Chemical mapping of a 207-nucleotide RNA with 2A3. Conditions: 150 mM KOAc, 10 mM MgCl2 and 150 mM bicine (pH 8.5), 24 C.

[RMDB]
RNA sequence: GGGAACGACUCGAGUAGAGUCGAAAAUAACUUAAUGGCUUUAAGUGAACCAGAACAAAACAGAAACACAAAAUUUGUAGAGAGAGGAUUUCAAAUGAGAAGUCGAGGGUGUCAACAAAGCUCUACUGGUGCUCUGGAUUCACCUAUGAGAGCGAAGUGAGUCUUCGCUAUUCGUAGCGAAGACUCAAAAAGAAACAACAACAACAAC
Reactivity to 2A3 in 0.01 (KOAc 150mM, MgCl2 10mM, bicine 150mM(pH8.5), 24C), signal-to-noise 1, nucleotides 027 to 156: u050a010a040c080u040u240a050a110u230g050g030c000u140u000u000a070a000g000u000g040a020a010c000c000a000g040a040a000c020a020a100a030a000c100a030g210a010a210a000c050a000c040a000a060a200a300u200u210u200g030u070a030g000a000g000a000g050a010g040g020a000u000u050u140c030a020a110a140u150g030a100g030a050a060g000u030c070g000a040g000g020g020u060g050u070c040a070a050c000a220a260a030g030c000u000c000u050a040c040u050g030g020u010g000c070u100c040u090g000g130a120u040u050c000a050c000c000u040a070u080g140a050g000a000g050c050g050a030a000g030